The record gives the reactivity of an RNA of 177 nucleotides to DMS and 2A3. DMS adducts were read by reverse transcription with MarathonRT. The data come from the RNA Mapping Database (RMDB), libraries RFM100 and RFMREP.
RNA sequence: GGGAACGACUCGAGUAGAGUCGAAAAACUGGAUAUACGUAUCCAGAAUAUCGUAAGCAUAAGUAGGUUCUUAUUCGGCUAUGUUUUCAAUUCAAGCCGCAUUAAGCCUACUUAGACUGGCGACAAACUACAAGUCUAUGUUCGCAUAGACUUGUAGAAAAGAAACAACAACAACAAC
Reactivity to DMS in 0.01 (KOAc 150mM, MgCl2 10mM, bicine 150mM(pH8.5), 24C), signal-to-noise 7, nucleotides 027 to 126: a090c010u000g000g010a010u000a020u010a040c220g030u000a000u000c000c000a000g000a080a070u020a180u000c010g020u000a080a020g010c300a080u010a000a010g020u000a000g000g010u010u030c100u000u000a010u000u010c000g000g010c000u000a080u010g010u010u010u010u030c300a110a130u020u000c040a030a030g000c000c000g010c150a020u000u000a010a010g010c020c000u000a000c010u000u000a000g010a070c030u000g010g010c000g000a020c210a040a070a190
Reactivity to 2A3 in 0.01 (KOAc 150mM, MgCl2 10mM, bicine 150mM(pH8.5), 24C), signal-to-noise 9, nucleotides 027 to 126: a000c010u010g000g000a000u010a000u020a020c260g090u020a010u010c000c000a000g050a040a060u180a040u040c010g010u020a030a000g020c030a070u000a020a000g000u000a010g000g020u110u140c040u050u040a010u010u010c000g010g000c000u030a160u300g080u050u110u060u190c190a150a150u100u050c010a040a000g000c000c000g000c010a000u020u020a000a000g000c000c000u000a000c000u000u000a000g000a010c010u010g050g000c000g000a020c050a030a080a010